This 177-nucleotide RNA was probed chemically with 2A3. It was measured as part of the RMDB library OK1LIB. Reactivities are given for positions 27 through 126. 2A3 adducts were read by reverse transcription with SuperScript II with manganese. The RNA was probed in 150 mM KOAc, 10 mM MgCl2 and 150 mM bicine (pH 8.5) at 24 C.
RNA sequence: GGGAACGACUCGAGUAGAGUCGAAAAAUUUCAUGGAGCAGAUGCUCUUUGAGGACAAACUUCCCGAGACUGUGACCUUUGACUGGUAUGGGAAAAAUUAUACGGUGCCUGUAGAAGAUCUGCCCAGCGGCCAAUGAGUUUUCGAACUCAUUGGCCGAAAAGAAACAACAACAACAAC
Reactivity to 2A3 in 0.01 (KOAc 150mM, MgCl2 10mM, bicine 150mM(pH8.5), 24C), signal-to-noise 2, nucleotides 027 to 126: a000u030u070u030c010a020u030g000g000a190g000c000a000g080a300u300g170c000u020c000u000u040u060g070a000g000g000a030c040a050a150a020c070u000u000c000c000c000g000a070g070a030c020u140g000u050g210a120c030c060u080u120u190g100a070c080u080g000g000u080a060u150g040g000g090a140a000a000a000a110u230u300a180u090a220c060g250g000u240g260c070c060u020g000u000a000g000a150a030g000a000u030c000u000g090c000c000c000a020g000